Structure probing data (2A3 and DMS) for a 177-nucleotide construct. Reactivities are rounded to 0.1 and cut off at 0 and 3. The DMS profile rests on 1,044 reads. For 2A3, 2,282 sequencing reads were counted. The data come from the RNA Mapping Database (RMDB), library TTRDES. DMS adducts were read by reverse transcription with MarathonRT. The reactions ran in a buffer of 150 mM KOAc, 10 mM MgCl2 and 150 mM bicine (pH 8.5), at 24 C.
RNA sequence: GGGAACGACUCGAGUAGAGUCGAAAAGAUAUGGAGCAUUCCAGCGCUCGAAGAACGCUCUCGGAAACGAGAGCGGGAGAGCAGCUGGAGAUGCUCCUAAGUCAAAACGCGAGCUUCGGCUCGCGAACCGUUAUAGUGCGUUCGCGCACUAUAACGGAAAAGAAACAACAACAACAAC
Reactivity to 2A3 in 0.01 (KOAc 150mM, MgCl2 10mM, bicine 150mM(pH8.5), 24C), signal-to-noise 1, nucleotides 027 to 126: g040a010u110a040u270g000g020a000g000c000a000u070u000c010c000a000g000c000g030c000u060c020g190a250a050g000a060a010c000g000c000u040c000u000c010g000g040a030a070a050c010g010a000g000a000g020c000g000g010g000a030g010a010g030c300a090g030c000u000g000g010a050g030a010u010g020c000u000c000c000u000a040a000g020u000c040a070a000a050a130c040g040c010g000a010g020c010u120u300c300g180g000c000u000c000g000c000g000a000a010
Reactivity to DMS in 0.01 (KOAc 150mM, MgCl2 10mM, bicine 150mM(pH8.5), 24C), signal-to-noise 1, nucleotides 027 to 126: g010a040u000a300u010g000g020a010g020c010a030u000u000c000c000a010g010c000g020c000u020c000g030a140a120g000a120a240c010g000c000u000c000u010c000g000g010a160a140a250c010g010a000g010a000g040c000g010g000g000a010g010a010g010c000a100g080c000u010g000g020a010g010a000u000g010c000u020c010c000u030a030a070g010u000c010a080a050a110a140c000g010c030g000a000g030c010u010u030c290g110g000c000u000c000g030c000g000a010a120